[RMDB]
RNA sequence: GGGAACGACUCGAGUAGAGUCGAAAAUUCUGCAGGAACGCGACUGUCGGAACAUCCAAUCCAUAGAAAGCGCGGUUUUUGCGCUUGUGCCAGUUUCUCAAAAAACCCGGGAUCCUCUUCCACCAGCAUGAUCAGCAGUAUUCGUACUGCUGAUCAUAAAAGAAACAACAACAACAAC
Reactivity to DMS in 0.01 (KOAc 150mM, MgCl2 10mM, bicine 150mM(pH8.5), 24C), signal-to-noise 3, nucleotides 027 to 126: u010u000c020u000g000c060a080g010g020a070a080c070g000c070g010a110c030u000g000u010c060g020g010a070a060c100a110u010c080c060a080a130u000c060c050a090u000a130g010a070a040a010g000c020g010c010g020g030u000u010u010u020u010g020c000g020c030u000u000g020u000g010c060c050a100g010u000u000u000c020u010c050a010a070a080a070a100a080c060c020c040g020g000g000a080u000c010c000u010c040u010u010c030c030a090c080c100a110g010c190
Reactivity to 2A3 in 0.01 (KOAc 150mM, MgCl2 10mM, bicine 150mM(pH8.5), 24C), signal-to-noise 1, nucleotides 027 to 126: u040u020c010u080g000c040a050g080g070a140a050c060g030c010g080a070c040u050g060u150c010g090g030a050a020c000a070u030c030c020a080a040u030c020c030a080u080a130g140a070a080a000g010c050g010c040g020g010u010u070u070u210u160g000c000g000c070u030u050g050u030g040c000c020a010g020u000u090u030c050u010c000a110a110a090a040a070a090c030c010c010g020g030g010a040u000c020c000u020c010u040u010c010c040a080c030c010a020g070c010